An RNA of 177 nucleotides, treated with 2A3 and DMS and read out base by base. The RNA was probed in 150 mM KOAc, 10 mM MgCl2 and 150 mM bicine (pH 8.5) at 24 C. Reactivities are given for positions 27 through 126. It was measured as part of the RMDB library TTRDES.

RNA sequence: GGGAACGACUCGAGUAGAGUCGAAAAAGAUAUGGAACGCUAUCAGGAGCUAUGAAGCCACUCAGUACGUAUAUCGGAAACGAUAUACGGAAGUGUGGUGGAGCUCCUGUAAGGCGUUCCUAAGUCACGUACGUGCAAACUUCGGUUUGCACGUACGAAAAGAAACAACAACAACAAC
Reactivity to 2A3 in 0.01 (KOAc 150mM, MgCl2 10mM, bicine 150mM(pH8.5), 24C), signal-to-noise 1, nucleotides 027 to 126: a020g060a000u060a000u080g010g000a000a000c020g000c060u010a020u270c020a000g020g020a010g020c000u030a160u300g000a040a000g000c020c000a000c010u020c010a050g020u050a010c000g000u000a000u020a010u000c020g010g060a020a000a000c020g000a000u000a000u000a010c000g020g000a080a070g300u080g000u010g000g000u000g000g000a000g000c020u090c000c000u000g000u000a000a010g100g060c010g010u000u020c000c000u000a010a000g000u000c000a000
Reactivity to DMS in 0.01 (KOAc 150mM, MgCl2 10mM, bicine 150mM(pH8.5), 24C), signal-to-noise 1, nucleotides 027 to 126: a040g000a000u020a190u010g000g000a000a020c010g010c050u000a300u020c000a010g000g010a040g000c020u000a300u010g000a110a190g000c010c000a000c000u000c020a080g000u010a240c000g000u040a000u000a030u000c000g000g010a120a010a070c000g000a020u000a000u000a010c000g000g000a010a170g070u000g010u000g000g000u000g000g000a010g000c000u010c000c000u010g030u010a050a110g010g050c000g040u000u000c000c000u010a000a060g000u000c040a300